The record gives the reactivity of an RNA of 177 nucleotides to DMS and 2A3. Reactivities are given for positions 27 through 126. The reactions ran in a buffer of 150 mM KOAc, 10 mM MgCl2 and 150 mM bicine (pH 8.5), at 24 C. Reactivities are rounded to 0.1 and cut off at 0 and 3. The DMS profile rests on 1,995 reads. It was measured as part of the RMDB library OK2TST.
RNA sequence: GGGAACGACUCGAGUAGAGUCGAAAAGGAUCCGAUUGAGUAAGCCUGCAAUGCCGAACCGACAAUGGGAUCCGAUGGUAUGGGAUCCACGCAGGCGCGGCAAUAUAUGGGGAUCCGCACGGAGACCCGUCCUUGCACGUUUCGACGUGCAAGGACGAAAAGAAACAACAACAACAAC
Reactivity to DMS in 0.01 (KOAc 150mM, MgCl2 10mM, bicine 150mM(pH8.5), 24C), signal-to-noise 3, nucleotides 027 to 126: g010g010a080u000c030c030g030a080u010u010g010a180g020u020a100a250g010c000c010u010g010c010a230a120u000g030c030c020g010a090a080c140c050g020a080c070a040a090u010g030g010g010a030u000c000c000g000a050u010g010g000u030a300u010g000g010g020a030u010c000c000a120c240g010c040a000g010g020c130g010c150g020g000c010a040a080u020a150u010a070u000g000g020g020g000a070u000c020c010g000c140a070c200g000g000a090g040a150c050c000
Reactivity to 2A3 in 0.01 (KOAc 150mM, MgCl2 10mM, bicine 150mM(pH8.5), 24C), signal-to-noise 3, nucleotides 027 to 126: g010g020a000u000c020c020g030a020u020u040g020a040g060u070a140a030g030c010c000u020g000c040a070a140u080g080c010c040g070a080a090c050c000g040a060c050a120a110u170g060g010g000a000u000c000c030g010a080u100g070g160u230a100u140g080g000g010a000u000c000c010a030c060g040c020a030g000g020c000g020c020g090g020c000a030a030u110a000u020a040u170g290g030g000g010a020u000c000c010g000c040a070c070g090g030a060g050a060c000c000